[RMDB]
RNA sequence: GGGAACGACUCGAGUAGAGUCGAAAAAUGUGCACAGGUUCAUGAAGUGCCGACCGCGGCAAUCCUUUCCGCGUCCAGCGAAGUGUUCAACGAAGUGCCGGUUCGUAACCCCGGCACGCUGGCGUUCUCCUCCUAUUGCAUUCGUGCAAUAGGAGGAAAAAGAAACAACAACAACAAC
Reactivity to 2A3 in 0.01 (KOAc 150mM, MgCl2 10mM, bicine 150mM(pH8.5), 24C), signal-to-noise 2, nucleotides 027 to 126: a000u100g020u070g040c040a000c010a080g160g080u190u150c050a040u300g130a180a050g060u030g050c000c000g050a030c030c050g050c020g010g020c030a030a120u060c000c030u030u070u060c010c020g000c030g050u080c020c000a030g020c040g040a140a040g050u060g080u260u260c070a060a050c070g080a080a020g030u000g010c000c010g000g060u080u080c110g090u070a070a070c000c000c010c010g000g030c020a010c000g030c000u010g030g000c000g010u070u000c000
Reactivity to DMS in 0.01 (KOAc 150mM, MgCl2 10mM, bicine 150mM(pH8.5), 24C), signal-to-noise 4, nucleotides 027 to 126: a070u000g010u020g020c010a030c030a110g030g010u010u010c130a100u000g010a130a150g020u000g000c020c000g010a110c160c110g010c030g000g020c170a070a080u010c050c040u000u010u000c020c040g010c030g010u000c010c020a020g020c010g020a080a130g010u000g010u010u010c170a090a040c070g000a100a170g020u000g000c010c000g000g020u010u020c160g010u000a140a130c190c190c000c000g000g000c000a010c000g020c020u010g000g000c100g000u000u010c070